[RMDB]
RNA sequence: GGGAACGACUCGAGUAGAGUCGAAAAGGUAAAAUGUGGAUGUCGGAAGCAUAGGAUUGAGACAGGAGAUACAGAGCUGUGCGGUGUAUUUUGAUGAUGUGGCCUUAGCCACACGACUAAGGGGAAACGCCAAAAUACUGUUCGCAGUAUUUUGGCGAAAAGAAACAACAACAACAAC
Reactivity to DMS in 0.01 (KOAc 150mM, MgCl2 10mM, bicine 150mM(pH8.5), 24C), signal-to-noise 2, nucleotides 027 to 126: g000g000u000a030a060a070a060u020g030u020g010g010a120u010g010u000c050g030g000a110a050g030c110a070u000a080g010g010a060u010u010g000a130g010a050c080a090g010g000a060g000a110u000a070c130a050g000a130g010c050u000g030u000g000c080g020g030u010g010u000a040u010u000u010u030g010a120u000g000a080u000g050u010g000g010c000c220u020u000a120g010c000c000a020c080a040c060g000a100c110u010a030a060g000g010g000g010a070a080a100
Reactivity to 2A3 in 0.01 (KOAc 150mM, MgCl2 10mM, bicine 150mM(pH8.5), 24C), signal-to-noise 1, nucleotides 027 to 126: g080g000u090a060a040a100a130u150g010u070g070g040a050u040g040u110c040g030g000a100a010g080c020a040u040a110g010g080a060u080u160g030a070g020a040c020a040g040g040a080g000a010u020a100c070a070g040a040g000c030u040g000u000g050c040g030g020u010g000u020a140u020u100u060u030g070a070u040g040a100u070g000u000g020g000c000c060u020u040a070g000c000c000a010c000a010c010g000a010c030u100a050a040g030g000g010g070a030a080a010